[RMDB]
RNA sequence: GGGAACGACUCGAGUAGAGUCGAAAAGAGGCUUGCCUCGGAGUCAAGCGGGAGGGCUCUCGGAGCGCCGCACGGGCGCAGUGCUGCGCGAAACUCUAGGCCCGUGACUGUUACGGACAAAUUCCGUAGCCAUGUUAGGCCAGCAUUGAAGAGCGUAGUUCUUUACCAAGUUCGCUUGGUAAAGAACAAAAGAAACAACAACAACAAC
Reactivity to DMS in 0.01 (KOAc 150mM, MgCl2 10mM, bicine 150mM(pH8.5), 24C), signal-to-noise 2, nucleotides 027 to 156: g000a080g010g020c010u010u000g020c060c050u010c050g030g000a100g030u000c040a050a130g040c040g020g010g050a090g010g000g030c030u000c020u000c040g020g000a300g000c010g020c040c020g020c050a070c060g010g030g000c100g040c070a140g000u010g010c010u010g010c030g060c000g030a130a080a060c030u000c020u010a090g020g010c010c010c010g000u010g010a040c000u000g020u000u010a040c000g020g030a090c050a120a130a210u080u000c000c000g020u000a040g010c000c090a030u010g050u010u020a070g000g000c010c010a090g020c060a090u000u000g020a120a010g010a100g010c040g030u010a180
Reactivity to 2A3 in 0.01 (KOAc 150mM, MgCl2 10mM, bicine 150mM(pH8.5), 24C), signal-to-noise 4, nucleotides 027 to 156: g090a030g030g000c040u050u080g020c030c020u020c050g020g010a020g020u090c080a090a020g050c040g030g020g000a070g000g060g000c010u010c020u040c090g080g050a090g000c010g010c000c020g030c020a040c050g070g050g000c070g020c050a010g000u020g000c020u010g000c000g000c010g060a050a040a020c050u050c060u120a110g030g000c000c040c010g000u040g020a070c070u050g010u020u000a000c000g000g000a030c100a140a230a170u290u000c010c000g000u000a000g000c020c050a050u110g030u050u110a030g020g000c010c020a020g030c030a080u060u180g050a110a050g030a040g030c020g010u030a040